RNA sequence: GGGAACGACUCGAGUAGAGUCGAAAAGAGUCAUACAACCCCAGAAACCAUUCCUUCUACCUUGAGUAUUGCUGAAUUCAGUUUAGCGUGCAUGCUCUUGGCUAUUCUCAUAGUGAUUGUCAAAUUUAAAACGACGAUGACUUCGGUCAUCGUCGAACUACAUCAUCCUCUUCGGAGGAUGAUGUAGAAAAGAAACAACAACAACAAC
Reactivity to 2A3 in 0.01 (KOAc 150mM, MgCl2 10mM, bicine 150mM(pH8.5), 24C), signal-to-noise 4, nucleotides 027 to 156: g030a000g020u060c020a010u040a190c080a040a110c000c000c000c000a020g100a080a060a040c070c020a050u080u070c040c010u070u140c040u080a080c010c010u010u030g020a020g010u020a050u140u120g020c000u000g030a100a100u210u200c060a130g160u040u100u160a030g060c050g030u060g020c010a020u030g010c010u000c000u020u010g020g000c000u040a060u140u030c040u000c030a110u070a090g100u070g110a190u070u100g070u060c050a020a020a160u110u190u230a090a170a050a030c010g000a000c020g000a000u010g000a000c000u020u040c190g060g000u000c010a000u000c020g000u000c000g000a000a000
Reactivity to DMS in 0.01 (KOAc 150mM, MgCl2 10mM, bicine 150mM(pH8.5), 24C), signal-to-noise 1, nucleotides 027 to 156: g010a060g010u010c010a100u010a120c070a050a130c030c000c010c020a140g000a170a070a080c030c020a130u000u000c010c000u000u000c000u000a030c000c000u030u000g000a050g050u000a030u020u000g030c020u000g000a090a070u000u000c130a200g060u000u000u000a040g010c030g070u010g000c080a180u010g020c010u000c010u030u000g010g020c050u000a100u000u000c000u000c050a120u000a100g000u000g000a130u000u000g000u000c000a030a140a110u020u010u000a030a060a120a270c000g000a010c000g020a010u000g030a010c030u000u010c300g070g040u010c000a010u000c010g010u000c010g000a010a050

An RNA of 207 nucleotides, treated with 2A3 and DMS and read out base by base. For 2A3 the reverse transcriptase was SuperScript II with manganese. Reactivities are rounded to 0.1 and cut off at 0 and 3. Source: RMDB library M2RFPK, as collected in RNAgym.